Notes: Structure probing data (DMS and 2A3) for a 207-nucleotide construct. For 2A3, 4,767 sequencing reads were counted. For DMS the reverse transcriptase was MarathonRT. The reactions ran in a buffer of 150 mM KOAc, 10 mM MgCl2 and 150 mM bicine (pH 8.5), at 24 C. The data come from the RNA Mapping Database (RMDB), library OK3TST. For DMS, 6,693 sequencing reads were counted.
RNA sequence: GGGAACGACUCGAGUAGAGUCGAAAACGGCUUGGCGACGCUACGUCGGAAGUUCGCCGAAGUCAUAUUGCUGUCCGACACGCCGAGCCUCAAGGUAAGCGGAUUGCGACCUGCGGAUAUCGGCGGAGAGAUCGGUAUUCGCCUCACCACCGGGGGGCUAAUCUUUGCUUUUCGAAGCAAAGAUUAGAAAAGAAACAACAACAACAAC
Reactivity to DMS in 0.01 (KOAc 150mM, MgCl2 10mM, bicine 150mM(pH8.5), 24C), signal-to-noise 3, nucleotides 027 to 156: c050g040g000c000u000u010g020g040c020g020a070c130g030c050u000a060c060g030u010c050g040g040a070a120g000u000u010c070g020c040c030g000a070a100g030u000c060a150u010a110u000u000g010c000u000g010u000c020c050g000a110c010a140c010g020c020c010g000a070g010c020c010u000c030a080a090g020g030u000a120a120g060c020g030g000a140u000u000g020c020g000a040c020c010u000g020c250g010g000a080u000a060u000c020g030g020c030g020g010a160g000a110g010a060u000c030g010g010u000a070u000u000c010g010c020c030u000c030a110c020c030a150c050c050g000g030g000g010g030g030
Reactivity to 2A3 in 0.01 (KOAc 150mM, MgCl2 10mM, bicine 150mM(pH8.5), 24C), signal-to-noise 4, nucleotides 027 to 156: c060g000g000c000u010u020g010g000c020g010a050c070g040c130u170a060c080g040u030c010g030g020a020a020g020u070u120c050g010c040c020g050a050a020g060u090c100a060u080a110u150u250g050c040u060g080u020c000c000g000a000c000a000c030g000c000c000g000a020g030c020c010u010c030a030a020g010g020u110a140a140g020c020g030g190a260u130u300g050c020g040a040c010c030u020g000c000g010g010a030u050a040u100c010g010g000c030g010g000a050g000a000g010a060u050c010g010g000u030a040u020u050c020g020c000c010u030c030a040c020c010a030c020c020g000g000g000g000g000g000